[RMDB]
RNA sequence: GGGAACGACUCGAGUAGAGUCGAAAACUUGCAAAGAAGGUAUCUACUUCUAGGGUACUCGAAAAGCAACUUAAAGUAAUAGAGAGUCAAGCACACACUCUAUUAUUUGAUCCAGCGUUUGUGCGCAUACUGGAUUCCGAUUCGUCGGAAUCCAGUAAAAAGAAACAACAACAACAAC
Reactivity to DMS in 0.01 (KOAc 150mM, MgCl2 10mM, bicine 150mM(pH8.5), 24C), signal-to-noise 2, nucleotides 027 to 126: c090u000u000g000c010a030a110a110g000a280a120g000g010u000a010u000c000u000a210c240u020u010c180u040a060g030g000g000u000a000c000u000c030g000a040a200a080a100g000c000a010a000c140u000u000a080a040a030g000u000a000a000u000a000g000a020g000a170g000u000c110a090a120g010c140a090c060a040c040a040c000u000c000u000a000u000u000a000u000u000u000g050a040u000c050c040a090g000c100g010u000u030u000g010u000g000c000g020c110a220
Reactivity to 2A3 in 0.01 (KOAc 150mM, MgCl2 10mM, bicine 150mM(pH8.5), 24C), signal-to-noise 2, nucleotides 027 to 126: c010u020u080g000c010a060a220a000g150a040a050g070g000u010a010u060c000u040a180c060u300u050c060u220a070g040g000g000u020a000c010u070c040g020a030a000a060a080g010c020a000a010c010u070u210a040a040a000g020u010a000a010u000a000g000a000g030a000g020u000c180a160a000g090c120a000c020a020c000a020c050u000c000u000a000u000u010a000u010u030u090g050a050u050c050c030a040g000c010g050u070u160u190g110u100g030c030g000c020a050